Structure probing data (2A3 and DMS) for a 177-nucleotide construct. Reactivities are given for positions 27 through 126. For 2A3 the reverse transcriptase was SuperScript II with manganese. Source: RMDB library OK2TRN, as collected in RNAgym.

RNA sequence: GGGAACGACUCGAGUAGAGUCGAAAACGGAGGGCAUGACGCUCAACGGCGACGGUGUGGGUGGUGUCAAAGUCAAGCUGAUCGCUAAGGUAGCGCCGAAAGAGCACGGCUCCGUCGUCAGCUUCGAGGACUACUUGAUCUUCGGAUCAAGUAGUCCAAAAGAAACAACAACAACAAC
Reactivity to 2A3 in 0.01 (KOAc 150mM, MgCl2 10mM, bicine 150mM(pH8.5), 24C), signal-to-noise 2, nucleotides 027 to 126: c000g010g020a030g040g050g000c020a070u090g080a050c020g000c020u000c060a060a030c050g020g000c010g010a060c030g000g030u120g030u140g120g090g000u090g090g000u100g030u050c020a110a080a000g010u030c020a030a050g000c000u090g030a100u150c060g000c070u080a000a050g120g050u080a020g130c010g030c050c010g060a050a040a000g100a010g050c040a010c040g020g010c050u000c010c030g020u050c000g020u000c010a010g000c040u060u060c040g030a040
Reactivity to DMS in 0.01 (KOAc 150mM, MgCl2 10mM, bicine 150mM(pH8.5), 24C), signal-to-noise 2, nucleotides 027 to 126: c020g020g010a130g010g010g000c000a090u000g010a120c120g020c030u010c030a080a300c090g000g040c010g030a120c080g000g020u000g010u030g000g010g000u010g000g060u020g010u020c130a020a070a120g010u010c070a020a090g000c030u010g000a060u000c080g020c050u000a110a080g030g000u000a100g000c070g000c090c050g000a060a090a050g000a130g000c010a140c040g000g010c000u010c010c030g000u020c030g010u000c050a080g010c060u000u000c180g010a160